[RMDB]
RNA sequence: GGGAACGACUCGAGUAGAGUCGAAAAGAGGAUGACUUCGGUCAUCCUCAAAUUAGGAAACCUGCGUGGUGCCGAGAGUAAAUGCAAACACGCCAAACUCAAAAAGUGAAUUCUUCGGAAUUCACAACGAUUCUAUCUUCUUCGGAAGAUAGAAUCGAAAAGAAACAACAACAACAAC
Reactivity to DMS in 0.01 (KOAc 150mM, MgCl2 10mM, bicine 150mM(pH8.5), 24C), signal-to-noise 1, nucleotides 027 to 126: g000a010g000g010a010u000g010a000c000u000u010c160g050g000u010c000a030u000c010c000u000c000a000a020a050u010u000a050g000g020a080a120a120c010c010u000g010c080g010u000g000g000u030g010c030c050g010a080g020a130g030u020a070a090a200u020g000c000a040a100a180c000a040c050g050c010c300a020a070a070c160u000c100a040a050a030a070a130g010u010g000a050a000u000u000c000u000u000c170g000g000a040a000u000u000c000a000c000a020a130
Reactivity to 2A3 in 0.01 (KOAc 150mM, MgCl2 10mM, bicine 150mM(pH8.5), 24C), signal-to-noise 2, nucleotides 027 to 126: g010a000g000g010a000u000g000a000c010u020u070c260g000g010u000c000a000u010c010c000u000c010a030a000a000u020u030a020g000g010a170a070a040c040c010u030g020c000g030u030g000g020u010g070c030c020g100a060g000a010g160u180a100a150a040u110g000c000a000a210a010c010a020c000g020c000c040a110a070a070c040u080c150a110a130a070a010a000g010u020g010a000a000u000u000c010u040u050c190g080g000a010a010u040u010c000a000c010a000a000